[RMDB]
RNA sequence: GGGAACGACUCGAGUAGAGUCGAAAAUGAAUGUAAUAAAGACGCCAUAUAUGAAACACUGUAGUAAUAUUUUAUGUAGAUUACUAUUCGAGAUUGGACUGAAUAGGUUAUUUCCAAUGUGUAUAGACAAACUACCCAGUUUCGACUGGGUAGUUUGAAAAGAAACAACAACAACAAC
Reactivity to 2A3 in 0.01 (KOAc 150mM, MgCl2 10mM, bicine 150mM(pH8.5), 24C), signal-to-noise 2, nucleotides 027 to 126: u150g010a090a020u030g010u250a080a010u110a210a110a090g070a110c000g060c030c010a000u060a000u070a000u080g080a160a020a120c010a050c230u150g000u110a060g060u000a030a070u060a160u110u190u030u100a090u130g050u030a020g000a110u000u160a100c010u000a000u000u120c000g020a000g270a260u040u040g010g000a000c000u080g130a170a160u290a140g000g000u170u050a100u080u100u000c000c230a120a170u040g040u000g140u100a000u180a190g110a000
Reactivity to DMS in 0.01 (KOAc 150mM, MgCl2 10mM, bicine 150mM(pH8.5), 24C), signal-to-noise 2, nucleotides 027 to 126: u010g000a080a030u030g000u000a120a050u000a050a080a100g010a050c070g000c050c100a050u030a060u040a110u040g010a210a090a060c040a090c200u030g010u000a050g010u020a120a010u020a010u040u010u010u050a090u030g000u010a130g000a060u000u010a050c000u000a000u000u000c030g000a090g030a160u030u040g000g020a060c040u000g010a080a060u030a040g000g000u020u000a090u000u000u000c000c010a060a070u050g010u010g040u000a200u000a020g000a300
This 177-nucleotide RNA was probed chemically with 2A3 and DMS. Source: RMDB library OK1LIB, as collected in RNAgym. For DMS, 2,509 sequencing reads were counted.